The record gives the reactivity of an RNA of 207 nucleotides to 2A3. For 2A3 the reverse transcriptase was SuperScript II with manganese. For 2A3, 530 sequencing reads were counted. 2A3 is a SHAPE reagent: it acylates the 2'-hydroxyl of flexible nucleotides of all four kinds.
RNA sequence: GGGAACGACUCGAGUAGAGUCGAAAAACGGCUGGCUACGGCCAGCCGACUCGGGCCAAAGGCAGUCGCCCGACGACACAGGCGAUCGUUCGCCCAAGCGCUGCACACGACUAUACGUAGUCGUGAAUUGAUCACGCAACCUUCGGGUUGCGUGAAACACCAGUAUUCAGUUCGCUGAAUACUGGUGAAAAGAAACAACAACAACAAC
Reactivity to 2A3 in 0.01 (KOAc 150mM, MgCl2 10mM, bicine 150mM(pH8.5), 24C), signal-to-noise 1, nucleotides 027 to 156: a000c010g000g000c010u020g010g000c010u030a030c210g070g010c020c000a000g050c000c000g000a000c000u000c000g000g030g000c020c080a230a130a100g100g000c030a010g040u110c010g000c000c010c010g010a010c040g010a000c020a050c030a190g100g000c010g000a070u100c050g100u070u050c020g180c010c000c020a000a030g080c050g010c100u100g010c030a000c010a000c010g010a010c000u000a000u040a080c300g170u010a010g000u020c010g010u010g000a000a010u100u100g040a030u040c030a000c000g100c000a000a020c000c000u060u080c130g020g000g000u000u000g020c010g010u000g000a000a000a000